[RMDB]
RNA sequence: GGGAACGACUCGAGUAGAGUCGAAAACUCAAUCACUACGGUGAUUGAGAAUGCUUACGCCUCAAUCAAGCUUGACUAGAGUGCCUCGAGCAGAUAUAGACUGAAACAUUUAGUAUGGUCAAGCAGGGAGCAACAGCUCGAGUACGCUCGAGCUGAAUAAAAUACGCCUAUUCGUAGGCGUAUUUUAAAAAGAAACAACAACAACAAC
Reactivity to DMS in 0.01 (KOAc 150mM, MgCl2 10mM, bicine 150mM(pH8.5), 24C), signal-to-noise 3, nucleotides 027 to 156: c000u020c000a030a010u000c000a000c010u010a100c300g090g000u000g000a020u000u010g000a000g010a050a070u000g000c020u000u000a110c080g020c000c000u000c060a090a090u000c080a120a180g010c010u000u000g020a040c000u000a140g000a080g030u000g000c000c020u010c040g000a120g040c020a180g000a180u000a110u000a140g010a150c030u010g020a090a040a030c020a070u000u000u000a080g010u000a130u010g030g020u000c020a020a040g020c000a160g010g010g000a100g040c040a070a170c010a050g010c000u000c010g010a020g000u000a070c300g010c000u000c000g010a040g010c040u000g000a040a070
Reactivity to 2A3 in 0.01 (KOAc 150mM, MgCl2 10mM, bicine 150mM(pH8.5), 24C), signal-to-noise 4, nucleotides 027 to 156: c000u000c000a000a000u000c000a000c010u030a020c210g120g000u000g000a000u020u000g000a010g000a020a070u090g030c000u050u060a080c090g050c020c020u100c050a090a170u090c070a090a050g010c000u010u010g020a030c000u020a050g010a030g230u040g050c020c020u130c140g060a060g000c030a020g090a020u150a010u080a130g160a050c060u070g070a080a140a020c030a060u100u120u060a070g020u070a040u110g010g000u010c000a000a000g000c010a020g010g030g010a070g020c020a030a110c010a010g000c000u000c000g000a000g020u030a040c220g020c080u000c000g000a000g000c000u000g010a000a000
Description
Source: RMDB library OK3TST, as collected in RNAgym. An RNA of 207 nucleotides, treated with DMS and 2A3 and read out base by base. For 2A3, 2,481 sequencing reads were counted. Reactivities are rounded to 0.1 and cut off at 0 and 3. 2A3 adducts were read by reverse transcription with SuperScript II with manganese. Reactivities are given for positions 27 through 156. DMS adducts were read by reverse transcription with MarathonRT.